RNA sequence: GGGAACGACUCGAGUAGAGUCGAAAACCCACCCGGAGCAAGGCCAAGAGGAAGCCCUCGGGCUUCUGCGCAGGCGUUCGAGGGCGGCCCGUCCGAUGCCCGCGGGUAGGCCGCUAGAGCCUGUCGGCUUAACAGUCUCGUUCGCGAGACUGUUAAGAAAAGAAACAACAACAACAAC
Reactivity to DMS in 0.01 (KOAc 150mM, MgCl2 10mM, bicine 150mM(pH8.5), 24C), signal-to-noise 1, nucleotides 027 to 126: c010c010c020a160c090c010c070g030g000a060g020c040a030a110g000g020c010c020a070a180g010a140g000g020a040a060g000c010c000c010u000c220g040g000g020c010u000u000c010u020g010c150g000c050a040g000g010c040g000u010u010c070g010a160g020g020g010c000g010g060c000c000c010g030u000c000c000g010a100u020g000c040c040c030g020c000g020g000g000u000a050g010g000c000c000g020c030u000a060g000a090g000c000c000u000g000u000c080g030g000
The record gives the reactivity of an RNA of 177 nucleotides to DMS. DMS (dimethyl sulfate) methylates the pairing face of unpaired adenines and cytosines. Values cover nucleotides 27 to 126.